[RMDB]
RNA sequence: GGGAACGACUCGAGUAGAGUCGAAAAGAGGGCCGCGGUGCUCUGGAGUAGAGGCUCUGCCUUCGAAACACCAUCGAUCGUCCCUUCUUCUUUACCUUCUUCUGGCUCUUCUUGGAGACGCGACCGGUGGCACCCCUGCUCGGUUCGCUCCAACCUGGGAUCUUAAACUGUUCGCAGUUUAAGAUCCAAAAGAAACAACAACAACAAC
Reactivity to 2A3 in 0.01 (KOAc 150mM, MgCl2 10mM, bicine 150mM(pH8.5), 24C), signal-to-noise 3, nucleotides 027 to 156: g030a000g000g010g010c010c010g030c020g020g010u010g020c000u000c000u010g000g010a000g030u010a010g000a000g020g010c060u080c220u300g050c080c020u180u220c010g010a000a000a000c010a030c110c000a000u030c010g100a300u030c000g000u000c050c000c010u040u060c010u030u020c010u030u100u090a090c010c000u040u030c080u110u050c080u100g070g010c030u010c000u250u020c000u080u040g070g010a080g010a190c030g000c070g030a010c010c000g000g040u090g060g000c060a130c000c020c000c020u000g030c010u040c080g000g020u060u040c010g000c000u000c000c000a010a040c000c020u070g070